[RMDB]
RNA sequence: GGGAACGACUCGAGUAGAGUCGAAAAUUUUGCCAGUUCGCUACAGGUUUCCCCGGGGAUCCCUGAAGCGCUCCUCCGAGCCGCCUUCUUUUUUCUUUUCUGCUCAGGAGGUCAGGUGUGAACCACAGGAACCACGAGUUUAGUUCCGAGGAACCAACGUAUUGCAAUUCUUCGGAAUUGCAAUACGAAAAGAAACAACAACAACAAC
Reactivity to 2A3 in 0.01 (KOAc 150mM, MgCl2 10mM, bicine 150mM(pH8.5), 24C), signal-to-noise 1, nucleotides 027 to 156: u250u250u130u140g050c060c050a030g040u050u020c000g000c000u080a080c030a130g020g040u080u050u060c030c060c010c030g040g000g000g000a000u000c000c010c000u010g030a130a030g250c100g130c180u050c000c000u000c000c010g010a000g080c100c070g080c030c090u270u130c130u180u300u150u110u150u070c030u060u180u130u010c010u060g000c000u000c010a120g000g000a000g000g010u010c000a000g020g030u140g000u010g300a000a030c000c030a070c060a080g080g000a000a000c000c000a080c000g010a060g010u090u060u170a010g000u080u000c000c010g000a070g050g020a110a040c050c000a000a050
About this RNA:
This 207-nucleotide RNA was probed chemically with 2A3. The data come from the RNA Mapping Database (RMDB), library VIROID. The 2A3 profile rests on 382 reads. For 2A3 the reverse transcriptase was SuperScript II with manganese. Conditions: 150 mM KOAc, 10 mM MgCl2 and 150 mM bicine (pH 8.5), 24 C. Values are in units of 0.01, from 0 to 300, in steps of 10. Values cover nucleotides 27 to 156.